Description: The record gives the reactivity of an RNA of 177 nucleotides to 2A3 and DMS. For DMS the reverse transcriptase was MarathonRT. 2A3 adducts were read by reverse transcription with SuperScript II with manganese. For DMS, 33,652 sequencing reads were counted.

[RMDB]
RNA sequence: GGGAACGACUCGAGUAGAGUCGAAAAAGCAGGUGCUGUGGGACGACCUUCCCACGUAACGACUGUUAUGAUGCAUUCCGAAAUUGACUGACCGGAAUGCGUGUGUCUGACACGAGCAAAAUCGGUCGUUUGUACUUACUUUCGAGUAAGUACAAACAAAAGAAACAACAACAACAAC
Reactivity to 2A3 in 0.01 (KOAc 150mM, MgCl2 10mM, bicine 150mM(pH8.5), 24C), signal-to-noise 9, nucleotides 027 to 126: a000g020c020a010g000g020u060g010c040u140g010u020g010g010g010a020c060g120a090c030c010u040u030c010c000c000a000c000g010u030a060a030c040g120a040c020u030g010u050u030a060u090g070a030u090g000c000a000u000u000c000c000g010a010a030a040u090u100g040a030c040u040g020a020c000c030g000g000a010a000u000g000c000g000u020g000u010g000u000c060u030g000a000c050a030c150g010a010g000c010a020a050a030a150u040c010g000g000u000c010
Reactivity to DMS in 0.01 (KOAc 150mM, MgCl2 10mM, bicine 150mM(pH8.5), 24C), signal-to-noise 8, nucleotides 027 to 126: a080g010c040a050g010g010u010g000c060u020g030u000g000g000g010a050c210g000a120c120c090u020u010c010c010c000a080c020g010u020a060a070c080g010a110c120u010g000u000u000a060u020g000a060u000g010c000a010u000u000c000c000g000a040a100a080u030u020g000a070c130u030g000a190c150c010g000g000a000a000u000g000c010g010u020g010u010g020u000c050u020g010a040c020a050c010g010a080g000c060a040a050a080a060u010c030g000g000u000c010